[RMDB]
RNA sequence: GGGAACGACUCGAGUAGAGUCGAAAAUUGCUGCUGCCUAAAGGGAGGAUCGGCAUGACGAAUGACGUCGCCGUAAGCAUGACGGCCGUUGCCAAAUCGUUUGGCGAAACGAAGGCUUUGAAGAAAUGCGAUUUUGUCGCCAAGGCAGGAGAGGUGCCGGUUACUGUACGUUCGCGUACAGUAACCGAAAAGAAACAACAACAACAAC
Reactivity to 2A3 in 0.01 (KOAc 150mM, MgCl2 10mM, bicine 150mM(pH8.5), 24C), signal-to-noise 1, nucleotides 027 to 156: u100u110g070c000u050g010c000u000g000c000c040u150a140a020a010g180g000g010a040g000g000a040u070c010g160g070c010a010u080g000a030c040g060a240a260u260g120a140c020g010u020c000g000c040c000g050u080a090a100g170c130a060u200g100a040c030g000g010c000c000g000u010u050g010c000c000a000a000a150u050c030g010u010u010u020g010g000c030g000a060a000a000c000g000a050a050g000g000c000u050u020u060g120a110a070g000a000a140a000u020g000c010g010a000u000u000u070u150g090u030c000g010c000c000a030a030g010g010c000a000g050g050a010g040a010g120g000u070g060c070